Structure probing data (DMS) for a 177-nucleotide construct. Values cover nucleotides 27 to 126. The DMS profile rests on 1,358 reads. DMS adducts were read by reverse transcription with MarathonRT. Values are in units of 0.01, from 0 to 300, in steps of 10. The RNA was probed in 150 mM KOAc, 10 mM MgCl2 and 150 mM bicine (pH 8.5) at 24 C.
RNA sequence: GGGAACGACUCGAGUAGAGUCGAAAAGAUAUGGAAAUGCUACCCACCUGCUAAGAGCGAUGAAAGAUAAGGCUCUCGGAAACGAGAGCCUUAUCUGGAGCUCGAUGCAGAGGCAUUUCCUAAGUCAUCAUUUCAUGAUGUUCGCAUCAUGAAAUGAAAAAGAAACAACAACAACAAC
Reactivity to DMS in 0.01 (KOAc 150mM, MgCl2 10mM, bicine 150mM(pH8.5), 24C), signal-to-noise 2, nucleotides 027 to 126: g000a160u000a200u000g010g010a020a020a010u000g000c000u010a190c030c020c000a300c210c000u000g000c000u000a220a230g010a020g000c010g000a120u010g000a290a090a020g000a010u000a000a000g020g000c000u010c000u030c010g000g000a030a030a160c000g050a000g010a010g060c000c000u000u000a000u000c010u010g000g030a040g030c020u000c000g000a110u020g000c020a030g000a060g030g000c000a010u000u000u010c000c010u010a020a090g010u010c160a150